RNA sequence: GGGAACGACUCGAGUAGAGUCGAAAAAAAAAAGAAUUCAGAAUCAGGCCGGGACGCGGACGUCCCGUCAACACGGUCGUACAUCCAGCCGGUUGCCUGAUUCCUUGCAUUGAGUGAUGUACGGAGUGAAUCCGUAGGGUUUCGACCCUACGGAUUCAAAAGAAACAACAACAACAAC
Reactivity to DMS in 0.01 (KOAc 150mM, MgCl2 10mM, bicine 150mM(pH8.5), 24C), signal-to-noise 1, nucleotides 027 to 126: a000a000a030a030a000a030g020a050a010u120u090c210a080g000a040a040u010c000a000g000g010c000c030g000g000g010a000c010g050c300g000g000a050c050g000u000c000c000c000g000u060c120a030a030c100a160c020g000g000u050c110g000u000a030c020a010u000c030c050a160g000c000c030g050g000u000u010g000c000c050u020g000a000u000u000c000c000u000u010g000c200a110u060u010g000a140g050u020g030a050u000g000u000a020c060g000g000a180g030u030
Reactivity to 2A3 in 0.01 (KOAc 150mM, MgCl2 10mM, bicine 150mM(pH8.5), 24C), signal-to-noise 2, nucleotides 027 to 126: a000a000a000a000a000a000g300a280a150u300u300c100a000g010a000a050u050c050a050g000g000c000c000g050g000g000a010c000g030c130g170g040a130c000g030u000c010c010c000g000u010c000a050a060c120a030c030g060g040u060c000g000u010a000c000a060u030c080c090a030g020c000c020g080g000u040u030g000c000c000u000g000a000u000u000c000c010u050u080g020c010a110u110u140g050a080g110u120g070a050u020g020u030a010c090g000g030a120g040u170
This 177-nucleotide RNA was probed chemically with DMS and 2A3. Conditions: 150 mM KOAc, 10 mM MgCl2 and 150 mM bicine (pH 8.5), 24 C. The DMS profile rests on 1,468 reads. The data come from the RNA Mapping Database (RMDB), library RFM100.